[RMDB]
RNA sequence: GGGAACGACUCGAGUAGAGUCGAAAAUCCACGUCCUUCGGGACGUGGAAAAUACGGCACGGGAGCCGAAGAAUUCCCGAAGCGCAGUGCAGCGCAGCACAAAAAGGUGAGUCUUCGGACUCACCAACAUGUCGUAAAUCUUCGGAUUUACGACAUGAAAAGAAACAACAACAACAAC
Reactivity to 2A3 in 0.01 (KOAc 150mM, MgCl2 10mM, bicine 150mM(pH8.5), 24C), signal-to-noise 3, nucleotides 027 to 126: u000c000c000a010c010g000u000c000c010u030u140c180g080g000g000a000c010g000u000g000g000a000a030a000a000u060a010c000g020g010c050a010c050g090g060g040a030g000c020c020g050a040a030g130a030a060u050u010c000c000c010g000a170a040g030c030g000c050a060g070u110g100c060a060g010c060g000c060a020g110c050a050c040a070a100a020a030a000g020g000u000g000a000g000u010c020u030u110c210g070g000a000c000u000c000a000c000c010a000a000
Reactivity to DMS in 0.01 (KOAc 150mM, MgCl2 10mM, bicine 150mM(pH8.5), 24C), signal-to-noise 3, nucleotides 027 to 126: u000c000c000a000c000g000u000c010c000u000u010c140g030g020g020a000c000g030u010g010g000a010a010a020a060u000a120c050g010g000c010a130c050g030g000g020a120g020c010c000g000a070a090g010a160a210u000u000c000c010c000g010a120a090g020c040g020c040a100g010u000g020c160a140g000c020g020c060a070g000c120a040c140a070a080a050a110a120g030g020u000g000a000g000u000c010u000u020c140g020g010a030c000u000c000a000c000c000a020a080